An RNA of 177 nucleotides, treated with 2A3 and DMS and read out base by base. For 2A3, 2,008 sequencing reads were counted. DMS adducts were read by reverse transcription with MarathonRT. It was measured as part of the RMDB library TTRDEL.
[RMDB]
RNA sequence: GGGAACGACUCGAGUAGAGUCGAAAAGAUAUGGAGCUCAGCUUGGACCGUACGGUGUCGGAAACGACAUUACGCUAGCUGUCCUCCUAAGUCAAAACUGGUAACUGUCUUCGGACAGUUACCAGAACGCAACCUAGAAGUUCGCUUCUAGGUUGCGAAAAGAAACAACAACAACAAC
Reactivity to 2A3 in 0.01 (KOAc 150mM, MgCl2 10mM, bicine 150mM(pH8.5), 24C), signal-to-noise 1, nucleotides 027 to 126: g030a000u030a010u080g030g010a010g010c010u010c010a010g030c020u100u190g070g090a300c060c070g010u030a080c120g250g060u020g000u000c000g060g000a090a090a060c010g000a000c000a000u000u060a010c040g060c060u000a010g010c000u000g010u020c000c010u000c000c010u030a090a010g060u000c030a000a020a120a140c010u010g000g000u000a020a000c010u020g040u050c050u080u230c300g000g020a000c000a010g010u010u000a000c000c000a020g010a010a000
Reactivity to DMS in 0.01 (KOAc 150mM, MgCl2 10mM, bicine 150mM(pH8.5), 24C), signal-to-noise 2, nucleotides 027 to 126: g010a010u000a290u000g010g010a030g020c110u000c000a000g020c000u010u030g010g020a080c300c040g000u000a060c300g000g000u010g000u010c000g000g000a090a080a170c000g020a010c000a020u000u000a020c020g000c030u020a010g010c010u000g010u000c140c000u000c000c010u010a030a070g000u000c000a120a090a150a160c010u000g000g000u000a000a000c000u000g020u000c000u000u000c200g010g000a010c000a000g000u000u000a000c000c010a000g000a030a040